Structure probing data (2A3 and DMS) for a 207-nucleotide construct.
Conditions: 150 mM KOAc, 10 mM MgCl2 and 150 mM bicine (pH 8.5), 24 C.
[RMDB]
RNA sequence: GGGAACGACUCGAGUAGAGUCGAAAAUCGUCUGACUCAAGGUCUAAACCGUAAGUUAAACGGUUAUUGAUAAGGCUUUGAAGCAUAGGUGCGUCUGAUAGCACUUGACGUGAAGCGUGCACGUAGUGAGCGAUAGUGCGCACUGGGUACGUUAACAGUUGUACCAGCUAUUCGUAGCUGGUACAACAAAAGAAACAACAACAACAAC
Reactivity to 2A3 in 0.01 (KOAc 150mM, MgCl2 10mM, bicine 150mM(pH8.5), 24C), signal-to-noise 4, nucleotides 027 to 156: u090c010g010u000c030u030g010a180c010u000c000a000a000g010g000u000c000u100a110a000a010c020c020g050u030a100a060g090u100u220a160a190a010c020g000g020u020u000a070u090u150g120a140u050a210a080g000g000c000u040u030u030g040a100a010g010c060a120u100a110g000g040u020g010c000g010u030c170u170g160a160u130a080g000c000a000c000u010u110g030a010c010g000u050g080a030a000g020c030g080u050g000c020a010c160g080u050a050g010u020g050a030g030c020g060a160u140a230g150u180g140c010g000c000a000c000u010g000g000g060u010a010c010g000u020u090a110a080c060a100
Reactivity to DMS in 0.01 (KOAc 150mM, MgCl2 10mM, bicine 150mM(pH8.5), 24C), signal-to-noise 1, nucleotides 027 to 156: u000c010g030u000c010u010g030a070c000u000c000a050a040g010g040u000c030u000a160a140a190c000c000g010u000a060a150g050u000u020a070a220a020c000g060g060u000u000a080u010u000g000a110u030a080a070g000g000c000u000u010u030g010a010a110g020c020a150u000a050g030g000u000g010c000g020u000c020u010g020a240u000a070g030c000a010c000u000u000g000a070c030g000u010g000a110a140g020c060g030u000g010c000a030c070g060u000a060g000u000g000a030g030c010g000a260u000a120g040u000g000c010g000c000a010c000u010g030g060g030u000a000c010g020u010u000a050a090c090a170